[RMDB]
Chemical mapping of a 177-nucleotide RNA with DMS and 2A3.
The RNA was probed in 150 mM KOAc, 10 mM MgCl2 and 150 mM bicine (pH 8.5) at 24 C.
DMS adducts were read by reverse transcription with MarathonRT.
It was measured as part of the RMDB library OK2TST.
RNA sequence: GGGAACGACUCGAGUAGAGUCGAAAACUACGCCGCGCGCAGCCAGCUCUGGCUCAGCCUGCUGUCCUGGGCAGUGGUCGUUGGGUGUUAUUUGGUCACCACAUUGGUGCGACGUCCCCUUAAUCGGGAUCAUAUUCUGGUUCGCCAGAAUAUGAUCAAAAGAAACAACAACAACAAC
Reactivity to DMS in 0.01 (KOAc 150mM, MgCl2 10mM, bicine 150mM(pH8.5), 24C), signal-to-noise 6, nucleotides 027 to 126: c050u000a050c070g010c010c010g030c060g020c040g020c040a050g020c300c030a060g000c050u010c110u010g020g000c020u000c160a090g010c040c040u000g000c010u000g010u010c090c030u010g000g000g020c000a080g030u010g000g010u010c060g020u000u000g020g000g010u010g010u010u000a090u010u000u000g020g000u010c010a030c020c020a140c180a170u010u000g010g030u000g000c040g010a080c050g000u000c030c000c010c090u010u010a080a100u000c190g000g000
Reactivity to 2A3 in 0.01 (KOAc 150mM, MgCl2 10mM, bicine 150mM(pH8.5), 24C), signal-to-noise 5, nucleotides 027 to 126: c000u030a030c000g010c000c000g030c000g000c010g010c020a000g030c000c000a000g000c020u070c120u230g040g020c020u070c060a030g010c000c030u090g000c010u010g020u030c020c030u060g020g070g020c040a100g020u030g040g020u140c050g060u040u080g050g020g010u040g030u100u100a250u080u140u130g110g000u190c010a000c040c010a040c030a160u090u300g060g000u030g000c020g040a040c030g090u090c010c000c010c010u060u170a140a070u170c070g080g050